[RMDB]
RNA sequence: GGGAACGACUCGAGUAGAGUCGAAAAGAUAUGGACGGCCACAAGGCGAAGAACUCGGAAACGAGGGAGCCUGUGGGCCGUCCUAAGUCAAAAGUCCAUUGACCCAGUUCGCUGGGUCAAUGGACAACAGAAAUAAUCCGUUCGCGGAUUAUUUCUGAAAAGAAACAACAACAACAAC
Reactivity to DMS in 0.01 (KOAc 150mM, MgCl2 10mM, bicine 150mM(pH8.5), 24C), signal-to-noise 2, nucleotides 027 to 126: g000a060u010a300u010g000g020a000c010g010g000c020c010a020c020a090a080g000g000c000g010a070a150g000a130a230c010u000c010g010g000a100a060a220c000g000a010g010g000g000a080g000c000c000u000g010u000g010g020g010c010c000g010u010c000c010u000a010a040g010u020c040a100a070a110a090g000u000c000c000a000u000u000g000a010c000c000c010a020g000u000u020c200g010c010u000g000g000g000u000c000a000a000u000g000g000a000c000a020a070